[RMDB]
RNA sequence: GGGAACGACUCGAGUAGAGUCGAAAAGAGCAAGUGGGCCUUUUAUGCUCUAAAGGGGUUCAAGAAGUGGUUUUAACCGGCACCAAUGUGGGGAGCUAUGGGAAAGAUAAAGAAAGCAAUAUCGCAAGUGGUUGUAUAAUUUCGAUUAUACAACCACAAAAGAAACAACAACAACAAC
Reactivity to 2A3 in 0.01 (KOAc 150mM, MgCl2 10mM, bicine 150mM(pH8.5), 24C), signal-to-noise 1, nucleotides 027 to 126: g000a000g010c030a070a000g050u080g020g060g020c030c030u010u080u020u020a080u220g040c000u010c010u060a040a030a000g010g000g000g010u050u040c050a030a000g040a060a010g070u100g030g030u060u070u010u050a090a100c000c040g000g040c030a010c010c000a000a100u130g000u070g030g010g000g020a010g030c000u030a090u090g050g000g000a060a100a030g010a040u180a100a120a000g110a050a020a020g120c000a000a040u120a060u300c070g050c070a060a060
Reactivity to DMS in 0.01 (KOAc 150mM, MgCl2 10mM, bicine 150mM(pH8.5), 24C), signal-to-noise 4, nucleotides 027 to 126: g020a040g020c040a050a120g010u000g010g020g020c030c020u010u000u020u000a070u030g020c020u010c030u000a020a120a110g010g000g000g010u000u010c110a060a090g010a110a090g010u000g000g010u000u000u000u000a070a140c110c040g000g020c040a050c060c060a050a120u010g010u000g010g000g000g000a080g010c040u010a030u010g010g000g000a040a070a060g000a090u010a040a060a090g000a060a060a040g000c060a070a090u010a050u010c080g030c140a090a120